Conditions: 150 mM KOAc, 10 mM MgCl2 and 150 mM bicine (pH 8.5), 24 C. Chemical mapping of a 177-nucleotide RNA with DMS and 2A3. The DMS profile rests on 3,842 reads. In probing experiments dimethyl sulfate is read out at A N1 and C N3, which are open when not base-paired. For DMS the reverse transcriptase was MarathonRT.
RNA sequence: GGGAACGACUCGAGUAGAGUCGAAAAAAGGGUGUGGGGCAUGUCAUUGCUGAUGCAGCCUAUGAUGCCGAUCACUUAAGGGCCUUCAUUGCCAGCGAUCUCAAGGCAACGGCUCAGAUCCAAGGCAUAGUGGCUAAUGAUUCGUCAUUAGCCACUAAAAAGAAACAACAACAACAAC
Reactivity to DMS in 0.01 (KOAc 150mM, MgCl2 10mM, bicine 150mM(pH8.5), 24C), signal-to-noise 5, nucleotides 027 to 126: a100a070g010g000g010u010g020u000g000g010g000g010c020a060u000g010u000c060a060u000u010g010c030u010g020a150u000g020c090a020g010c030c130u000a050u010g010a020u000g030c020c010g020a210u000c020a070c100u010u000a090a130g010g000g000c020c000u010u010c190a150u000u000g010c010c010a100g050c240g010a110u000c110u010c090a100a270g000g000c020a040a030c290g000g010c020u000c040a080g000a080u000c020c080a150a070g000g010c090a090
Reactivity to 2A3 in 0.01 (KOAc 150mM, MgCl2 10mM, bicine 150mM(pH8.5), 24C), signal-to-noise 2, nucleotides 027 to 126: a000a000g070g000g000u030g010u000g000g100g040g060c040a020u080g070u150c010a030u060u020g000c010u000g020a300u170g060c020a030g050c010c000u060a110u060g060a000u010g010c010c000g000a000u050c000a010c030u070u050a120a150g030g030g010c000c000u050u080c090a090u020u040g000c010c010a060g000c040g090a120u000c090u040c140a010a080g000g040c020a040a070c000g050g000c000u020c000a020g010a000u000c010c030a040a030g060g000c020a050